[RMDB]
RNA sequence: GGGAACGACUCGAGUAGAGUCGAAAAGGCGGAAUCCCGAAAUCCCUCCAAAACGCGCGCAAAUAAAGGGAGGGAGGGAUGAUCCCGAAAGCGCGCGACGGGGUGAAGGCUCAACGGCCGAACGCCAGACCGUGACCUAUUUCGAUAGGUCACGGUCAAAAGAAACAACAACAACAAC
Reactivity to DMS in 0.01 (KOAc 150mM, MgCl2 10mM, bicine 150mM(pH8.5), 24C), signal-to-noise 1, nucleotides 027 to 126: g000g000c050g000g000a140a000u010c000c000c000g000a040a000a210u010c000c000c020u000c000c010a130a080a180a300c040g000c000g000c000g010c000a010a110a120u060a030a120a000g000g020g040a060g000g000g010a000g000g000g060a080u000g000a050u090c000c000c000g000a050a010a090g000c000g000c040g060c040g000a230c070g010g000g000g000u000g050a100a040g000g000c080u030c180a100a150c300g000g000c030c030g000a040a070c010g060c010c130a260
Reactivity to 2A3 in 0.01 (KOAc 150mM, MgCl2 10mM, bicine 150mM(pH8.5), 24C), signal-to-noise 2, nucleotides 027 to 126: g040g000c010g080g030a070a050u050c000c000c000g000a000a000a040u020c010c010c010u000c030c000a030a010a150a050c040g000c000g030c000g000c000a090a140a100u200a230a230a050g010g000g000a030g000g000g010a020g000g000g000a050u100g020a040u110c030c000c010g030a040a040a000g010c000g000c000g000c000g020a010c020g000g000g000g000u060g060a050a010g030g000c010u010c120a080a050c110g040g000c000c000g010a040a010c020g010c000c020a000
Chemical mapping of a 177-nucleotide RNA with DMS and 2A3. DMS adducts were read by reverse transcription with MarathonRT. Conditions: 150 mM KOAc, 10 mM MgCl2 and 150 mM bicine (pH 8.5), 24 C. It was measured as part of the RMDB library OK1LIB.